Source information:
Structure probing data (DMS and 2A3) for a 177-nucleotide construct. The 2A3 profile rests on 3,065 reads.
RNA sequence: GGGAACGACUCGAGUAGAGUCGAAAAGAGGUCGAUGAAGGAGGUUAGAUUUGGGAAGACCUAUCCUUUACUCUAAGUCUCAUUAUGACGUUCGAGAACGUCGUAUGAGACUUUAGGGCUACCUCCAACUCACUUACGCGUUCGCGCGUAAGUGAGUAAAAGAAACAACAACAACAAC
Reactivity to DMS in 0.01 (KOAc 150mM, MgCl2 10mM, bicine 150mM(pH8.5), 24C), signal-to-noise 1, nucleotides 027 to 126: g050a040g000g000u010c030g030a100u070g020a110a180g000g000a000g030g010u000u050a000g000a190u020u010u040g000g000g010a040a140g000a100c040c060u010a140u060c000c000u000u010u070a120c010u040c000u000a000a000g000u000c000u000c000a010u060u020a000u040g010a000c000g030u050u010c160g030a220g000a010a000c000g000u000c000g000u000a000u000g000a000g000a000c000u000u040u050a000g020g000g000c000u000a030c000c020u000c000c000a220
Reactivity to 2A3 in 0.01 (KOAc 150mM, MgCl2 10mM, bicine 150mM(pH8.5), 24C), signal-to-noise 5, nucleotides 027 to 126: g110a020g030g020u100c090g030a130u190g110a180a090g030g010a000g000g030u090u080a040g020a200u170u200u300g080g010g000a020a060g010a020c000c000u020a050u040c000c000u050u100u100a050c010u000c000u020a000a000g000u000c000u000c010a030u130u260a020u040g000a010c020g000u010u060c090g080a030g080a230a000c000g000u000c010g000u000a000u010g000a000g000a000c000u000u010u000a000g000g000g000c000u000a000c000c000u000c000c000a000